[RMDB]
RNA sequence: GGGAACGACUCGAGUAGAGUCGAAAAACAGGCCGAUAUACUCUACGGAGUAUAUCGGCCUGAUCUGUUUUUCGAACAGAUGUAAAUCGAAGAGCAAUGCGAUCAGGUACGCCUGAUCGCAGUGCAAAAAAUCUUGGUUGCUUCGGCAACCAAGAAACUAAUGAGUUAGGUUCGCCUAACUCAUUAGAAAAGAAACAACAACAACAAC
Reactivity to DMS in 0.01 (KOAc 150mM, MgCl2 10mM, bicine 150mM(pH8.5), 24C), signal-to-noise 1, nucleotides 027 to 156: a090c000a020g000g030c000c000g000a020u000a000u000a030c000u000c010u000a130c300g050g000a050g050u000a000u000a010u010c000g020g050c000c000u000g000a000u000c000u000g000u000u010u000u000u030c230g000a080a020c020a010g000a010u000g060u040a070a100a170u000c030g020a120a090g020a290g000c010a010a010u000g020c000g000a030u000c000a020g020g000u010a060c300g060c030c020u020g000a010u000c000g030c000a000g010u010g020c020a000a020a090a150a050a110u000c000u000u000g000g000u000u000g010c000u000u000c300g030g010c030a000a010c020c000a000a000g000a020a030a090

The data come from the RNA Mapping Database (RMDB), library M2RFPK. Structure probing data (DMS) for a 207-nucleotide construct. DMS adducts were read by reverse transcription with MarathonRT. The RNA was probed in 150 mM KOAc, 10 mM MgCl2 and 150 mM bicine (pH 8.5) at 24 C. The DMS profile rests on 2,679 reads.